Chemical mapping of a 207-nucleotide RNA with DMS and 2A3.
RNA sequence: GGGAACGACUCGAGUAGAGUCGAAAAUAGUGCGAACCUUGUCAUUAAUGACUUUCUGUUUCGCACCUUUGCACCUAAGGAGUUUGAUUUUUCGAACUCCUUAGUUCCUCGUUAUACUCAGGCCUUCUCCGCGUUUAAUGCCAAGUAUGGCACUAUGCCCUCCUAUUUGGUUCGCCAAAUAGGAGGGAAAAGAAACAACAACAACAAC
Reactivity to DMS in 0.01 (KOAc 150mM, MgCl2 10mM, bicine 150mM(pH8.5), 24C), signal-to-noise 1, nucleotides 027 to 156: u000a050g020u000g010c000g020a050a030c030c100u000u000g050u000c000a150u030u000a150a130u030g010a030c030u000u000u000c070u000g020u010u000u000c020g030c020a020c000c020u000u000u000g000c060a160c250c000u010a030a010g010g010a030g020u000u000u000g020a080u000u000u000u000u000c020g000a010a020c000u000c000c010u000u010a010g000u000u000c040c030u020c060g020u000u010a210u000a080c020u000c010a060g000g020c000c010u010u000c000u010c030c120g030c080g010u000u000u010a050a000u000g010c040c020a080a300g020u010a160u010g020g010c010a050c010u000a060u010g000
Reactivity to 2A3 in 0.01 (KOAc 150mM, MgCl2 10mM, bicine 150mM(pH8.5), 24C), signal-to-noise 4, nucleotides 027 to 156: u090a000g000u000g000c010g000a000a010c010c030u040u090g000u010c020a080u070u300a190a240u210g030a020c000u070u210u070c130u150g060u020u050u030c010g000c000a000c000c000u080u110u100g050c100a070c020c000u010a000a000g000g010a000g010u020u000u030g040a070u080u070u120u190u120c000g000a000a000c000u000c000c000u000u000a000g000u000u020c000c010u030c020g040u050u090a070u030a090c030u040c060a050g050g000c000c020u040u040c060u030c030c050g060c020g080u070u110u140a090a020u060g010c010c010a050a020g070u040a110u100g010g020c020a020c040u060a060u200g040
Description: Reactivities are given for positions 27 through 156. 2A3 adducts were read by reverse transcription with SuperScript II with manganese.